[RMDB]
RNA sequence: GGGAACGACUCGAGUAGAGUCGAAAAGUUAACACCUUCGGGUGUUAACAAAUAAGGGAAGUCGAGUGCAAAAAGCACAGUCUUCCCAAGACAAAACGACAAAAACAUCUCCCUUCGGGGAGAUGAACGAUAAACUCAACUUCGGUUGAGUUUAUCGAAAAGAAACAACAACAACAAC
Reactivity to 2A3 in 0.01 (KOAc 150mM, MgCl2 10mM, bicine 150mM(pH8.5), 24C), signal-to-noise 2, nucleotides 027 to 126: g000u000u000a000a000c000a010c010c000u020u070c230g060g000g000u000g000u000u000a000a000c000a000a000a010u150a010a000g010g000g010a000a000g000u000c030g180a170g090u010g000c010a020a150a090a300a150g000c000a010c000a000g000u000c010u000u000c000c000c000a000a010g020a010c050a010a130a030a030c090g140a010c070a010a120a000a010a020c010a000u010c010u010c020c010c000u000u020c220g030g000g000g000a000g000a000u000g000a000a010
Reactivity to DMS in 0.01 (KOAc 150mM, MgCl2 10mM, bicine 150mM(pH8.5), 24C), signal-to-noise 2, nucleotides 027 to 126: g000u000u000a000a010c010a000c000c000u010u020c220g020g010g000u000g010u000u010a000a010c010a030a070a060u010a130a130g010g000g020a000a010g020u000c010g010a150g020u000g010c020a090a070a170a160a190g000c000a000c000a110g000u010c000u000u010c000c000c000a040a030g010a080c200a060a060a140a050c160g000a080c110a060a050a080a150a100c000a000u000c000u000c000c000c000u000u010c200g020g000g000g000a010g000a000u000g010a030a000